[RMDB]
Structure probing data (2A3 and DMS) for a 207-nucleotide construct. For DMS the reverse transcriptase was MarathonRT. Conditions: 150 mM KOAc, 10 mM MgCl2 and 150 mM bicine (pH 8.5), 24 C.
RNA sequence: GGGAACGACUCGAGUAGAGUCGAAAAUGACCUCUCUCUUCUCUCACUGAUGGAAGGCAGGCAGACCUUCUCCCGUCUGCUAACUCUGGAGCCUCUGACCCAUCUCUCAGGAACACUUCAGUACACAGAGACCUGCGAUAUGUGUGUGUGUGUGAGGUGUUAACUACAUGUUCGCAUGUAGUUAACAAAAAGAAACAACAACAACAAC
Reactivity to 2A3 in 0.01 (KOAc 150mM, MgCl2 10mM, bicine 150mM(pH8.5), 24C), signal-to-noise 5, nucleotides 027 to 156: u120g070a030c010c000u010c000u010c000u020c020u080u040c030u000c010u020c020a070c070u080g030a050u090g090g030a050a030g040g000c040a030g030g050c010a010g010a050c010c000u170u050c070u070c040c020c010g010u010c010u010g010c020u050a150a050c030u040c060u150g060g070a030g030c020c010u040c030u040g100a100c010c000c020a040u050c050u000c010u010c050a000g040g070a090a030c050a020c050u070u110c030a070g080u120a070c060a010c010a060g060a020g020a150c010c020u030g010c040g040a040u020a040u120g090u010g000u010g000u000g010u000g010u000g040u030g010a020g000g050
Reactivity to DMS in 0.01 (KOAc 150mM, MgCl2 10mM, bicine 150mM(pH8.5), 24C), signal-to-noise 3, nucleotides 027 to 156: u010g020a110c020c020u000c020u000c020u010c040u010u020c030u010c020u000c000a140c040u000g010a100u010g020g010a100a080g020g020c040a170g030g010c040a040g010a040c010c050u000u000c080u000c040c020c070g030u010c010u000g030c020u000a080a090c050u000c040u010g030g010a090g020c030c020u000c040u010g000a160c020c030c110a110u000c040u000c030u000c020a120g010g010a070a060c060a100c010u000u000c040a050g010u000a110c030a060c050a040g010a160g020a070c040c020u000g030c050g000a160u000a080u000g010u000g010u000g000u000g040u010g000u010g010u000g010a050g020g010
The data come from the RNA Mapping Database (RMDB), library OK3TST.